Source: RMDB libraries RFM100 and RFMREP, as collected in RNAgym. An RNA of 177 nucleotides, treated with DMS and 2A3 and read out base by base. The reactions ran in a buffer of 150 mM KOAc, 10 mM MgCl2 and 150 mM bicine (pH 8.5), at 24 C. High 2A3 reactivity points to a flexible backbone, as in loops and unpaired stretches.

[RMDB]
RNA sequence: GGGAACGACUCGAGUAGAGUCGAAAAGCUUGUGUUAGGUGCAAACAUACGCCCACCGUCCUCUUCAAGAGCGGCGGUGGUACCUCAUUCAGUGCACUUGGGAAGGUCUGAGGAAGCCGACAAUCUCAAUACAGUUCAGAUUCGUCUGAACUGUAUUAAAAGAAACAACAACAACAAC
Reactivity to DMS in 0.01 (KOAc 150mM, MgCl2 10mM, bicine 150mM(pH8.5), 24C), signal-to-noise 9, nucleotides 027 to 126: g030c010u000u000g020u000g000u000u000a060g010g010u000g010c020a050a040a030c020a020u000a030c140g000c060c010c000a000c000c000g010u000c010c000u000c000u000u030c290a130a100g010a010g010c180g020g000c000g000g010u000g000g000u010a020c030c010u000c190a100u010u010c110a080g010u000g000c010a010c000u000u000g000g000g000a050a070g000g010u000c030u010g010a120g010g010a100a090g010c050c060g000a060c110a040a070u010c020u000c040
Reactivity to 2A3 in 0.01 (KOAc 150mM, MgCl2 10mM, bicine 150mM(pH8.5), 24C), signal-to-noise 9, nucleotides 027 to 126: g010c010u030u020g010u000g020u020u030a060g000g020u020g020c010a010a020a010c010a010u050a010c030g010c000c000c000a000c000c000g010u010c010c000u030c020u240u220c230a290a040g000a000g000c120g010g000c000g000g000u000g000g000u000a000c000c010u090c020a130u200u110c060a020g080u010g040c010a010c010u030u040g040g000g010a070a080g030g010u030c040u050g050a070g080g080a070a030g050c020c010g010a010c020a030a130u020c020u010c030